[RMDB]
This 177-nucleotide RNA was probed chemically with 2A3 and DMS. For DMS, 1,129 sequencing reads were counted. Source: RMDB library TTRDES, as collected in RNAgym. The 2A3 profile rests on 1,736 reads. Reactivities are rounded to 0.1 and cut off at 0 and 3.

RNA sequence: GGGAACGACUCGAGUAGAGUCGAAAAGAUAUGGAGCUCAUGUAGACAUGCUUGGGAUCGGAAACGAUCCACAAGCAACAGCUAUUGUGAGCUCCUAAGUCAAAAUCCCCGUACUUCGGUACGGGGACGUAAGAGCGUUCUUCGGAACGCUCUUACGAAAAGAAACAACAACAACAAC
Reactivity to 2A3 in 0.01 (KOAc 150mM, MgCl2 10mM, bicine 150mM(pH8.5), 24C), signal-to-noise 1, nucleotides 027 to 126: g060a010u100a060u120g010g000a000g010c000u000c000a050u040g080u060a020g020a180c100a230u170g000c000u020u000g000g000g030a000u030c000g030g090a060a050a010c000g010a000u020c010c030a100c010a000a000g080c000a030a000c000a020g040c000u010a010u190u300g040u000g000a000g000c000u010c000c000u010a000a010g040u000c010a010a040a030a300u010c010c000c000c010g000u000a010c010u050u200c300g160g010u010a000c000g000g000g000g000a000
Reactivity to DMS in 0.01 (KOAc 150mM, MgCl2 10mM, bicine 150mM(pH8.5), 24C), signal-to-noise 1, nucleotides 027 to 126: g010a050u000a300u010g040g010a000g020c000u000c000a000u010g070u000a000g000a110c070a300u000g020c000u010u000g020g020g000a020u010c010g000g020a110a100a210c000g010a010u000c010c020a080c020a000a000g010c020a060a050c250a100g020c040u000a010u000u000g030u000g000a010g000c010u010c000c010u000a000a100g000u000c000a060a070a150a200u000c000c000c000c000g020u000a010c000u000u000c250g060g010u000a000c000g010g000g010g010a010